[RMDB]
RNA sequence: GGGAACGACUCGAGUAGAGUCGAAAACGAUUUUCAGUCCGGUUAUGCUGCUGAUAUGUUCGGCCUUGAUAUUGCUGCGUUUACGGCGAUUGAAAUGGCGGAAAACGGCGACAGCUCCCACCCGAACCCUUAAGUGGGGUUUCGACCCCACUUAAGGAAAAGAAACAACAACAACAAC
Reactivity to DMS in 0.01 (KOAc 150mM, MgCl2 10mM, bicine 150mM(pH8.5), 24C), signal-to-noise 1, nucleotides 027 to 126: c140g010a150u010u000u020u000c040a100g020u010c020c040g020g000u000u020a080u000g020c010u000g000c010u010g000a090u010a070u000g000u000u000c050g010g020c000c020u010u010g000a160u010a020u010u000g010c000u000g000c110g010u010u010u000a140c020g020g010c020g000a020u010u010g000a140a030a090u010g020g020c010g010g010a030a050a080a060c060g010g000c020g000a070c000a050g010c020u000c020c010c050a110c140c030c010g010a030a070c090
Reactivity to 2A3 in 0.01 (KOAc 150mM, MgCl2 10mM, bicine 150mM(pH8.5), 24C), signal-to-noise 1, nucleotides 027 to 126: c030g040a040u040u070u090u110c010a000g020u040c060c020g030g000u070u030a110u250g000c010u030g030c010u030g010a080u070a020u300g100u050u020c040g170g000c020c010u000u060g020a010u000a000u010u050g010c030u000g050c050g190u070u110u150a070c040g000g010c000g000a000u000u020g000a000a010a060u150g010g000c070g040g000a000a100a010a010c040g010g020c030g050a020c000a010g050c000u000c020c000c020a020c010c020c000g040a030a050c020